[RMDB]
RNA sequence: GGGAACGACUCGAGUAGAGUCGAAAAUCCGCAAGCGUUUCGAUGCUCCCAUACGGCUCACCGUGGAUGCACUGCGUCAUCGACGCUAUCCGGAGGCAUGGGAUAAGCUGAAGCAGCUGUACCACAACGACGUGGCGUGAUUCGUCACGCCACGUCGAAAAGAAACAACAACAACAAC
Reactivity to 2A3 in 0.01 (KOAc 150mM, MgCl2 10mM, bicine 150mM(pH8.5), 24C), signal-to-noise 1, nucleotides 027 to 126: u060c010c000g010c050a040a010g040c020g000u050u000u050c200g080a300u070g010c000u000c030c000c000a050u100a120c080g060g050c030u020c060a150c050c090g040u130g020g020a020u070g050c100a040c170u090g040c000g040u090c000a180u180c070g000a010c020g000c020u030a050u000c010c000g030g020a030g000g040c020a030u010g020g000g000a000u020a080a000g000c020u000g020a020a020g000c010a050g040c050u000g090u150a070c000c070a070c050a190a020
Reactivity to DMS in 0.01 (KOAc 150mM, MgCl2 10mM, bicine 150mM(pH8.5), 24C), signal-to-noise 1, nucleotides 027 to 126: u000c020c010g010c050a170a000g010c050g030u000u010u010c010g000a040u030g000c040u000c020c010c010a030u000a060c170g000g000c020u020c040a110c170c120g010u010g000g000a070u030g010c120a050c220u000g020c050g020u010c010a080u010c160g000a040c010g000c040u000a050u000c060c040g020g000a140g030g030c080a040u000g000g000g010a050u020a050a110g010c020u000g000a010a010g030c000a100g080c020u000g000u000a160c100c020a040c080a120a060